[RMDB]
RNA sequence: GGGAACGACUCGAGUAGAGUCGAAAAUGAUUCUGGAUUUAUAGGUCGUAGUCGCUCCAGAAUUGAUAACGCCCCGCAUGAGCUCCUGCAUAAUCGUAGCUGCUGCUGGACUGUAAAUCUGAACAGGCCUCGUAGUGCGGUUCGCCGCACUACGAGGAAAAGAAACAACAACAACAAC
Reactivity to 2A3 in 0.01 (KOAc 150mM, MgCl2 10mM, bicine 150mM(pH8.5), 24C), signal-to-noise 1, nucleotides 027 to 126: u140g000a000u000u000c000u000g000g020a000u000u240u000a200u050a170g300g000u050c080g000u000a030g030u100c130g010c080u000c010c000a000g000a010a000u000u000g250a090u030a120a140c250g080c000c000c000c000g120c080a080u290g030a000g040c000u010c000c000u070g000c010a040u210a050a030u180c080g120u070a040g000c000u000g000c040u040g000c090u120g000g080a000c000u000g000u000a010a010a000u120c160u040g000a040a000c000a000g240g090
Chemical mapping of a 177-nucleotide RNA with 2A3. Conditions: 150 mM KOAc, 10 mM MgCl2 and 150 mM bicine (pH 8.5), 24 C.